Source: RMDB library M2RFPK, as collected in RNAgym. An RNA of 207 nucleotides, treated with 2A3 and read out base by base. The 2A3 profile rests on 1,230 reads. The reactions ran in a buffer of 150 mM KOAc, 10 mM MgCl2 and 150 mM bicine (pH 8.5), at 24 C.
RNA sequence: GGGAACGACUCGAGUAGAGUCGAAAAGAUUCGCCGUCGGCAUUUCCCCAGCAGCCAUGACCUACCAGGCUGCGGUGCGGCUCGCCGCACAGGUCAUCUCUCAUCGGGCGCGUCCUGCGUCCUUCCAAAAACUGACUAACCUUCGGGUUAGUCAGAAGUAGUUGUAAUCGUUCGCGAUUACAACUACAAAAGAAACAACAACAACAAC
Reactivity to 2A3 in 0.01 (KOAc 150mM, MgCl2 10mM, bicine 150mM(pH8.5), 24C), signal-to-noise 2, nucleotides 027 to 156: g020a050u100u080c070g030c040c040g170u090c090g010g100c070a060u040u020u000c010c020c000c000a040g000c000a000g000c000c000a140u150g020a030c030c020u150a300c140c080a000g000g000c000u000g000c000g010g000u010g000c000g000g000c100u100c100g170c000c000g000c000a000c000a010g020g070u010c000a070u060c060u020c040u020c050a250u190c080g000g000g000c000g000c020g060u140c040c070u120g000c010g010u000c000c000u050u090c020c010a050a090a050a050a070c000u000g000a000c000u000a000a000c030c000u080u050c140g020g020g010u000u000a010g000u000c000a010g000a000a010